[RMDB]
Source: RMDB libraries RFM100 and RFMREP, as collected in RNAgym. Chemical mapping of a 177-nucleotide RNA with DMS and 2A3. Values cover nucleotides 27 to 126.
RNA sequence: GGGAACGACUCGAGUAGAGUCGAAAACAGCUAUGACGAGUUCUUGACGACAUGACGUCAUCACUGACAAUUAAAGAUAGUUCCCUUCGUUCGGGUUGACUAUCGUCGGAGAUGUGGACGAGCGCCUUUAUCCUCAUUACUUCGGUAAUGAGGAUAAAAAAGAAACAACAACAACAAC
Reactivity to DMS in 0.01 (KOAc 150mM, MgCl2 10mM, bicine 150mM(pH8.5), 24C), signal-to-noise 5, nucleotides 027 to 126: c080a100g000c060u010a040u010g000a060c050g010a170g010u010u010c020u000u000g010a120c050g010a070c100a080u020g020a110c060g000u010c000a010u000c070a050c040u010g000a050c050a110a100u020u020a070a080a120g000a050u010a050g020u000u000c100c000c010u000u010c130g010u000u010c150g010g000g000u020u020g010a030c020u000a020u010c020g000u000c030g000g000a050g010a050u010g010u000g000g000a060c050g010a070g010c050g000c040c010u000
Reactivity to 2A3 in 0.01 (KOAc 150mM, MgCl2 10mM, bicine 150mM(pH8.5), 24C), signal-to-noise 8, nucleotides 027 to 126: c010a000g020c020u050a020u110g040a010c030g020a010g070u050u020c030u090u130g090a060c060g010a010c020a110u140g070a070c030g010u020c010a010u010c020a010c010u030g030a020c040a060a130u170u160a190a060a030g050a040u050a020g000u030u050c010c000c020u040u080c100g030u050u060c030g010g000g000u100u200g040a040c020u030a030u050c030g000u020c010g040g020a070g020a080u110g030u080g080g020a020c030g010a020g020c020g010c010c000u000